[RMDB]
RNA sequence: GGGAACGACUCGAGUAGAGUCGAAAAGAAAGAAAGAAAGAAUGACUUAGCUGGGUAGUGGGGAACCCUUCCAUGAGGAGUAGAACACUCCUUAUGCAAGAUUCCCUUCUACCUGGCUGGGUUGGAAUUCGAGUCUAUCAUUCGUGAUAGACUCGAAAAAAGAAACAACAACAACAAC
Reactivity to DMS in 0.01 (KOAc 150mM, MgCl2 10mM, bicine 150mM(pH8.5), 24C), signal-to-noise 4, nucleotides 027 to 126: g020a070a110a090g010a100a090a080g000a090a110a100g020a120a070u000g010a010c010u000u000a010g020c000u010g000g000g000u010a000g000u010g000g000g000g000a030a010c140c060c010u020u030c250c000a000u000g010a010g000g010a030g020u000a100g000a130a300c180a040c000u000c000c000u000u010a010u000g010c300a020a000g000a300u000u000c000c000c000u000u020c000u000a000c000c000u000g010g000c000u000g000g000g010u000u010g000g000a100a070
Reactivity to 2A3 in 0.01 (KOAc 150mM, MgCl2 10mM, bicine 150mM(pH8.5), 24C), signal-to-noise 4, nucleotides 027 to 126: g110a010a060a010g130a050a090a010g110a030a100a020g110a040a080u180g010a010c010u010u040a000g000c000u020g010g000g000u000a000g000u000g000g000g000g000a000a010c150c020c000u000u000c030c000a000u000g010a000g010g000a000g000u070a060g090a160a010c020a000c050u000c000c000u000u000a000u010g000c000a000a000g000a000u010u000c000c010c000u000u000c000u000a000c000c000u000g000g020c000u000g000g000g010u000u020g020g100a020a050